[RMDB]
RNA sequence: GGGAACGACUCGAGUAGAGUCGAAAAGGGGUUCGGGGGCUGUUGCCAUGAUAUAUAUGGAUGAGACAGAAGUGGCCCCGUUGACGAGUUUAACUUAGAUUAAGUAGGACGCAUGAUCUUGAGCUCUAGUGAAGAAUAAGUUCGCUUAUUCUUCACUAAAAGAAACAACAACAACAAC
Reactivity to 2A3 in 0.01 (KOAc 150mM, MgCl2 10mM, bicine 150mM(pH8.5), 24C), signal-to-noise 2, nucleotides 027 to 126: g030g040g000g010u090u170c030g000g010g020g040g000c010u000g000u040u030g030c000c000a020u020g150a020u060a030u050a010u000a010u200g000g030a060u130g080a050g010a060c020a000g060a120a020g100u060g080g020c000c030c040c010g000u010u050g000a040c000g020a020g020u010u060u110a100a020c010u040u060a040g070a170u140u050a130a000g030u040a060g080g050a030c060g020c050a020u070g010a040u050c000u030u070g050a010g010c000u010c010u080
Reactivity to DMS in 0.01 (KOAc 150mM, MgCl2 10mM, bicine 150mM(pH8.5), 24C), signal-to-noise 5, nucleotides 027 to 126: g010g000g000g020u000u000c070g010g020g000g010g020c020u010g010u000u000g010c010c010a020u000g000a140u010a100u010a090u000a030u000g000g010a120u010g030a200g000a050c040a070g000a150a120g010u010g010g010c010c020c010c030g010u000u000g010a090c110g000a080g010u000u010u010a060a080c050u000u000a050g000a120u000u010a040a060g010u000a140g010g000a080c080g010c060a060u000g000a050u000c020u000u010g010a070g010c070u000c090u000
Conditions: 150 mM KOAc, 10 mM MgCl2 and 150 mM bicine (pH 8.5), 24 C. An RNA of 177 nucleotides, treated with 2A3 and DMS and read out base by base. For DMS the reverse transcriptase was MarathonRT. Values cover nucleotides 27 to 126.